The data come from the RNA Mapping Database (RMDB), library RFMREP.
Structure probing data (DMS) for a 177-nucleotide construct.
The reactions ran in a buffer of 150 mM KOAc, 10 mM MgCl2 and 150 mM bicine (pH 8.5), at 24 C.
RNA sequence: GGGAACGACUCGAGUAGAGUCGAAAAAGAAAGAGCUUCUGCCCUGAGACUCAGAAAAAUAUUCUCCUGUGCUUUGGUUCAGUAUAGAUUUCUAAACCCUGAUCAUUGCUUAAGAGAUAUUCACUGACUAAAAAUCUUAGUUCGCUAAGAUUUUUAGAAAAGAAACAACAACAACAAC
Reactivity to DMS in 0.01 (KOAc 150mM, MgCl2 10mM, bicine 150mM(pH8.5), 24C), signal-to-noise 1, nucleotides 027 to 126: a090g000a090a070a170g000a130g070c130u000u000c050u000g000c090c010c010u000g000a120g000a110c180u000c020a050g000a040a100a130a040a050u000a020u030u000c000u000c040c010u000g000u000g000c020u000u000u000g010g000u020u010c000a030g000u000a300u000a040g000a280u010u010u010c020u000a020a040a260c150c220c000u000g020a000u020c000a000u000u000g000c010u000u010a030a080g000a040g000a010u000a000u000u000c110a220c020u000g000a130